[RMDB]
RNA sequence: GGGAACGACUCGAGUAGAGUCGAAAAGAUUACGUGUCGUUGUGGAAUCGAUACUACGCACGAGAUUCCAACGUCUCUGUAGUACGUCCGCUGGUGACGUCUUUGGAGUCACGUUCGAUAUACGAAAGCUAUCUACUUGCUUCGGCAAGUAGAUAGCAAAAGAAACAACAACAACAAC
Reactivity to DMS in 0.01 (KOAc 150mM, MgCl2 10mM, bicine 150mM(pH8.5), 24C), signal-to-noise 2, nucleotides 027 to 126: g020a100u050u020a070c220g000u020g010u030c000g020u000u000g000u000g000g020a080a140u040c040g000a060u030a020c080u020a020c040g000c120a000c090g000a120g020a040u000u010c010c050a010a070c020g000u000c000u000c050u020g040u030a020g020u010a070c050g000u010c020c010g080c080u020g000g000u000g000a010c000g000u050c060u010u060u020g000g000a000g020u000c060a040c010g000u000u000c020g020a090u000a020u050a090c040g000a020a190a160
Reactivity to 2A3 in 0.01 (KOAc 150mM, MgCl2 10mM, bicine 150mM(pH8.5), 24C), signal-to-noise 3, nucleotides 027 to 126: g090a040u120u130a040c020g020u040g080u080c010g000u040u060g050u020g060g050a040a130u100c010g000a010u040a080c070u020a010c030g060c000a020c080g020a010g000a050u050u000c000c000a010a000c020g050u000c010u000c000u040g010u000a010g000u070a060c050g100u030c000c100g030c110u120g090g100u180g000a000c010g040u020c030u080u050u230g030g000a030g000u070c010a010c030g020u050u030c020g000a020u020a020u010a100c040g110a070a000a010